Chemical mapping of a 207-nucleotide RNA with 2A3.
RNA sequence: GGGAACGACUCGAGUAGAGUCGAAAAGUCCGGAUCCUGGCCUCGUUUAGAAGGCUUGCCGUACAGCUGUGGUCACGGGGGCUGUACGGGACGUUUCCGUGACUGGGCUUGUCUGCACCAUGUCGGUGUGAGUGCAGGAGCCGAGCAAUAACGACAGGCAAUUAAGUUUCUUCGGAAACUUAAUUGCAAAAGAAACAACAACAACAAC
Reactivity to 2A3 in 0.01 (KOAc 150mM, MgCl2 10mM, bicine 150mM(pH8.5), 24C), signal-to-noise 1, nucleotides 027 to 156: g060u050c050c020g020g050a100u130c060c070u020g190g000c010c010u060c040g000u080u190u240a230g030a260a010g010g000c000u010u180g020c040c000g020u020a000c010a000g010c000u000g010u010g210g010u040c000a000c010g040g030g010g010g010c000u000g010u000a000c000g020g000g000a030c050g040u010u160u300c040c000g000u020g010a020c000u010g070g050g000c000u020u070g020u130c000u000g000c000a020c000c070a000u090g140u240c160g020g100u220g010u020g070a020g040u030g000c000a000g000g000a000g030c000c000g000a030g000c010a050a170u170a140a000c060g090a030c040a040g080

For 2A3 the reverse transcriptase was SuperScript II with manganese.